[RMDB]
An RNA of 177 nucleotides, treated with 2A3 and DMS and read out base by base.

RNA sequence: GGGAACGACUCGAGUAGAGUCGAAAAGGUAGGGCAUUCGUGCCCUACCACACCUCUAAGCAGAUUGGCGAGGACGACGUCGCGGGCCACGUUUACCAACAACUACUCUCUCCUUCGGGAGAGAGAAGGUUCAAGUCAAGUUCGCUUGACUUGAACCAAAAGAAACAACAACAACAAC
Reactivity to 2A3 in 0.01 (KOAc 150mM, MgCl2 10mM, bicine 150mM(pH8.5), 24C), signal-to-noise 2, nucleotides 027 to 126: g030g000u010a000g020g010g000c000a000u030u120c210g060u040g010c000c000c000u020a000c000c000a010c010a000c000c010u000c060u080a090a070g020c050a050g030a300u130u200g080g010c050g000a010g010g000a040c040g000a020c020g100u040c000g000c020g060g010g000c000c050a030c010g000u010u040u040a180c000c010a020a070c000a040a010c030u120a050c000u020c000u000c000u000c000c010u010u070c200g060g030g000a010g000a000g000a000g000a000a010
Reactivity to DMS in 0.01 (KOAc 150mM, MgCl2 10mM, bicine 150mM(pH8.5), 24C), signal-to-noise 1, nucleotides 027 to 126: g010g030u000a010g000g000g000c010a040u000u030c170g020u000g010c000c000c000u000a000c000c000a070c180a030c010c000u000c140u000a090a060g010c110a070g010a160u010u000g010g020c030g030a220g000g000a180c050g000a050c080g000u030c110g000c100g060g000g000c040c040a020c060g000u000u020u010a160c000c010a090a050c110a030a040c050u010a260c020u010c000u000c000u010c000c040u000u010c180g040g010g000a000g000a000g000a010g000a020a040

Source: RMDB library M2PK50, as collected in RNAgym. 2A3 is a SHAPE reagent: it acylates the 2'-hydroxyl of flexible nucleotides of all four kinds. The RNA was probed in 150 mM KOAc, 10 mM MgCl2 and 150 mM bicine (pH 8.5) at 24 C. The 2A3 profile rests on 2,165 reads.